RNA sequence: GGGAACGACUCGAGUAGAGUCGAAAAUUUCUCUCUUCUUUUAAGAAUGUACUUGCUUGAUUGAAAAGCUUCUUAGAGGAACAUUGUGUGUCUAACACAAGGAAGUUUAAGGCAACAACAGGUCUGUGAUGUCCUUAGAUGAACUAGGCUGCACGCGGAUAUUCCUCCAGUUCGCUGGAGGAAUAUCAAAAGAAACAACAACAACAAC
Reactivity to DMS in 0.01 (KOAc 150mM, MgCl2 10mM, bicine 150mM(pH8.5), 24C), signal-to-noise 1, nucleotides 027 to 156: u010u000u000c000u000c020u000c030u010u010c010u000u000u010u020a030a050g010a050a030u000g030u000a070c050u000u000g010c030u000u010g000a280u010u010g000a080a080a060a050g010c080u000u000c000u000u000a040g030a020g020g010a010a020c060a070u000u010g020u010g010u000g020u000c070u000a090a170c030a090c020a080a090g000g020a090a240g020u000u010u000a020a060g010g020c000a050a070c000a030a060c040a050g010g010u000c140u030g020u000g010a140u000g010u010c000c000u010u000a030g000a020u010g040a090a200c040u000a100g010g030c040u000g020c030a050c060g000c060g000
Reactivity to 2A3 in 0.01 (KOAc 150mM, MgCl2 10mM, bicine 150mM(pH8.5), 24C), signal-to-noise 3, nucleotides 027 to 156: u010u070u010c010u000c000u000c030u050u020c010u020u050u020u040a020a010g000a070a080u130g020u070a120c010u040u090g090c010u060u040g140a300u120u110g040a240a180a060a020g020c000u010u000c020u020u030a020g000a000g020g030a020a020c020a060u120u110g000u000g010u000g010u020c050u080a150a040c030a010c040a080a010g020g030a060a060g020u030u040u110a020a000g020g040c000a030a030c010a070a020c000a090g160g130u110c150u090g060u040g050a110u040g080u090c020c000u000u040a040g000a060u120g020a070a060c010u000a040g000g070c040u040g000c050a020c050g080c060g050
This 207-nucleotide RNA was probed chemically with DMS and 2A3. For DMS, 2,442 sequencing reads were counted. 2A3 adducts were read by reverse transcription with SuperScript II with manganese. DMS adducts were read by reverse transcription with MarathonRT.